[RMDB]
RNA sequence: GGGAACGACUCGAGUAGAGUCGAAAAUUGUAUUGGACUCAUGAUGAAUCCCUAAGAGAUCAUCAUGAGUUCCUCCUGCUGGGUGGCCUGCAGUGCUCUUGGGGCUGUAUGUGUUCAUCAUGAAGCAUCCAAUUACACGAUUCGUCGUGUAAUUGGAAAAAGAAACAACAACAACAAC
Reactivity to DMS in 0.01 (KOAc 150mM, MgCl2 10mM, bicine 150mM(pH8.5), 24C), signal-to-noise 3, nucleotides 027 to 126: u010u000g010u010a260u000u010g010g000a030c010u000c000a010u000g010a010u000g000a080a090u000c020c020c120u010a140a100g010a180g000a020u000c000a010u000c000a000u000g000a010g010u000u000c000c050u010c030c010u000g020c040u000g000g010g020u000g000g000c020c000u010g010c030a040g020u000g000c020u000c080u010u000g020g000g000g010c040u010g010u000a010u020g010u010g020u000u000c020a020u000c020a110u010g000a110a060g010c070a160
Reactivity to 2A3 in 0.01 (KOAc 150mM, MgCl2 10mM, bicine 150mM(pH8.5), 24C), signal-to-noise 2, nucleotides 027 to 126: u080u080g120u090a110u020u200g000g000a000c010u000c000a000u010g010a020u000g030a060a170u040c040c040c020u100a180a020g070a020g010a110u010c000a000u020c000a020u000g000a000g010u000u020c000c000u000c010c020u000g030c000u070g070g000g010u040g010g020c000c010u020g000c020a020g010u070g300c000u050c010u100u190g000g030g000g000c010u020g020u040a100u140g120u020g040u090u120c010a040u010c020a040u160g090a050a000g010c010a050